[RMDB]
RNA sequence: GGGAACGACUCGAGUAGAGUCGAAAAGGACCUAAGGCGAGGCCGACAGGCGUAGUCGAUGGAUAACCGGUUGAUAUUCCGGUACCCGCUGUGAAGCGUCAAACAUCGAGCAUCGUGAUGCUAAGGCUCUACUGUUGACAUUCGUGUCAACAGUAGAAAAAGAAACAACAACAACAAC
Reactivity to 2A3 in 0.01 (KOAc 150mM, MgCl2 10mM, bicine 150mM(pH8.5), 24C), signal-to-noise 4, nucleotides 027 to 126: g050g030a130c020c010u040a050a040g060g000c020g010a040g070g000c010c010g030a060c080a090g030g000c020g020u040a010g010u040c000g010a020u060g000g010a040u070a080a060c000c010g000g010u010u070g110a150u060a090u190u030c000c000g000g010u030a090c030c010c000g000c050u060g050u070g160a130a020g000c010g030u070c080a100a100a090c030a050u060c040g050a030g050c030a040u040c040g100u080g060a060u070g050c040u060a050a070g060g000c010
Reactivity to DMS in 0.01 (KOAc 150mM, MgCl2 10mM, bicine 150mM(pH8.5), 24C), signal-to-noise 8, nucleotides 027 to 126: g000g000a190c020c020u000a140a170g010g010c040g010a180g010g010c000c010g030a130c300a090g000g000c010g020u000a300g000u000c010g000a110u000g000g010a060u000a120a060c010c000g000g000u000u000g010a130u010a240u010u010c000c000g010g010u000a050c040c030c000g010c020u000g000u020g010a100a060g010c010g010u000c080a040a050a110c100a050u000c030g000a060g010c080a050u000c060g010u010g000a110u000g020c030u010a080a140g010g010c090